[RMDB]
RNA sequence: GGGAACGACUCGAGUAGAGUCGAAAAAUAAUGCUUCUACAUUCUGUACGACAAAAUCUGUAUUAAUAGAGAGUAAAUCGUUACUGUGAAUUGCAAUGUAACUUUGCAACCUCUUCAUUAACUGCUAUAAAAUAUAUGACUUCGGUCAUAUAUUUUAAAAAGAAACAACAACAACAAC
Reactivity to 2A3 in 0.01 (KOAc 150mM, MgCl2 10mM, bicine 150mM(pH8.5), 24C), signal-to-noise 1, nucleotides 027 to 126: a000u170a010a090u020g060c010u050u030c050u110a080c030a060u130u020c030u060g020u020a010c070g000a010c070a050a050a060a040u040c020u000g060u110a110u120u160a200a140u110a020g010a030g000a000g040u010a030a030a050u030c030g000u020u070a040c010u050g000u020g160a130a210u160u120g000c000a000a000u050g010u100a060a030c000u030u080u000g030c020a000a080c000c010u010c000u030u010c060a000u150u130a010a070c030u140g030c020u070a050
Reactivity to DMS in 0.01 (KOAc 150mM, MgCl2 10mM, bicine 150mM(pH8.5), 24C), signal-to-noise 3, nucleotides 027 to 126: a100u010a090a020u000g030c100u000u010c070u000a090c050a060u010u000c070u000g010u000a030c030g010a040c030a030a090a160a150u010c010u000g000u000a140u010u010a060a040u000a050g000a050g010a070g010u000a030a160a070u000c030g010u010u010a010c040u000g010u000g020a090a160u010u010g000c070a030a040u010g010u000a050a070c080u000u000u000g010c030a050a110c150c040u000c020u000u010c040a040u000u010a070a070c120u010g000c100u000a150